Overview
This 177-nucleotide RNA was probed chemically with DMS and 2A3. Values are in units of 0.01, from 0 to 300, in steps of 10. Reactivities are given for positions 27 through 126. For 2A3, 2,389 sequencing reads were counted.

RNA sequence: GGGAACGACUCGAGUAGAGUCGAAAAAAGCCCAGUGAGCGACCUGGCUUCGCGAGAUCAACCACUGCAUCCAGCACAGCAUCGCCGAGAGCGAGUGCAAGGCAAUGCUUUAGGGGAUUGCCGGAGAAUCCUCAUUCUACUUCGGUAGAAUGAGGAUAAAAGAAACAACAACAACAAC
Reactivity to DMS in 0.01 (KOAc 150mM, MgCl2 10mM, bicine 150mM(pH8.5), 24C), signal-to-noise 4, nucleotides 027 to 126: a080a110g000c050c020c010a090g010u010g020a090g010c110g000a040c040c050u000g000g010c030u020u010c100g050c070g010a090g020a070u000c050a100a250c070c010a080c040u010g000c070a080u010c020c050a100g020c060a060c110a150g000c030a080u000c020g020c040c050g020a160g010a130g010c040g000a050g010u010g000c040a120a110g000g010c010a020a020u010g000c010u000u000u000a120g010g000g000g020a050u000u010g020c010c030g000g000a130g010a080
Reactivity to 2A3 in 0.01 (KOAc 150mM, MgCl2 10mM, bicine 150mM(pH8.5), 24C), signal-to-noise 2, nucleotides 027 to 126: a040a040g090c060c000c000a010g080u050g100a080g000c050g000a070c020c080u080g050g000c000u070u060c050g000c060g030a070g000a080u070c030a020a050c020c000a010c030u010g020c010a040u080c010c000a020g040c020a020c000a030g090c010a050u050c030g040c040c060g220a140g020a030g180c040g030a040g090u080g020c040a060a050g020g010c000a020a000u070g070c000u020u080u200a160g010g010g000g040a020u000u060g000c010c010g070g010a060g060a120